[RMDB]
This 207-nucleotide RNA was probed chemically with DMS and 2A3.
The data come from the RNA Mapping Database (RMDB), library M2RFPK.
For DMS, 6,730 sequencing reads were counted.
The 2A3 profile rests on 7,325 reads.
DMS adducts were read by reverse transcription with MarathonRT.
For 2A3 the reverse transcriptase was SuperScript II with manganese.
RNA sequence: GGGAACGACUCGAGUAGAGUCGAAAAACGGAUGGUACGCCAUCCGACCAUUGGGUAGAAGCGUUCAAUCAGCACCGUGACGGUGCAGAUGGGAAAUUCCCCAUGAUACGCACCAUACGUGGUGCGAAAAAGCCAUCGGUGUUCGCACCGAUGGCAACAGAAAUAAUAGGUUCGCCUAUUAUUUCUGAAAAGAAACAACAACAACAAC
Reactivity to DMS in 0.01 (KOAc 150mM, MgCl2 10mM, bicine 150mM(pH8.5), 24C), signal-to-noise 3, nucleotides 027 to 156: a110c020g020g010a060u000g010g010u000a120c280g050c050c010a020u000c000c010g020a020c040c030a190u000u000g020g000g020u010a060g020a070a100g010c080g040u000u020c030a100a080u000c020a130g020c000a020c000c020g010u000g000a170c120g040g020u010g000c000a000g000a030u010g000g000g000a040a100a140u000u000c010c000c010c020a070u030g000a150u000a090c020g010c010a020c000c000a090u000a080c200g030u000g000g040u000g020c010g010a010a030a050a120a140g010c000c000a000u000c020g040g020u000g010u000u010c300g030c000a050c010c000g020a010u000g000g050c010a000a000
Reactivity to 2A3 in 0.01 (KOAc 150mM, MgCl2 10mM, bicine 150mM(pH8.5), 24C), signal-to-noise 7, nucleotides 027 to 156: a010c000g000g000a010u010g010g010u050a040c190g050c050c000a000u000c000c000g010a010c000c000a080u050u100g040g010g010u150a120g060a110a030g150c070g080u060u050c040a060a090u040c020a030g000c000a000c010c020g100u180g220a120c190g010g000u000g000c010a010g000a010u010g010g010g050a010a070a060u060u040c000c000c000c000a020u120g030a040u070a070c020g010c000a000c000c000a020u050a140c270g090u040g000g000u000g010c000g010a040a030a000a010a000g000c010c000a000u000c020g000g000u010g030u050u090c180g010c090a000c000c000g000a000u000g010g000c010a000a000